[RMDB]
RNA sequence: GGGAACGACUCGAGUAGAGUCGAAAAGCAGUAUCUCGUUAGGCGAGGCUCCUAUGCAAACACAGGUUGCUGAUCUGACGACGUCGAGAGACGCCCAAGAUUAGGACAGGAUAUAUCGAACCAAGGUGAACCUGUCCAGGGUUCGCCCUGGACAGAAGUGCUUCUCAUUGUUCGCAAUGAGAAGCACAAAAGAAACAACAACAACAAC
Reactivity to 2A3 in 0.01 (KOAc 150mM, MgCl2 10mM, bicine 150mM(pH8.5), 24C), signal-to-noise 2, nucleotides 027 to 156: g050c050a010g060u190a130u070c010u000c030g020u080u180a090g150g000c020g040a030g010g070c030u060c010c030u170a120u210g070c070a040a200a000c030a020c040a070g040g020u060u160g050c030u020g010a010u000c030u030g020a020c020g040a020c010g010u010c000g040a010g010a010g000a110c010g010c030c000c020a030a030g000a040u020u040a010g030g030a030c040a030g000g020a030u030a000u030a000u110c080g040a060a060c020c020a110a000g110g000u030g080a030a070c020c000u000g000u000c000c000a000g010g010g030u020u060c080g050c010c000c000u000g000g000a010c010a000g000a020a010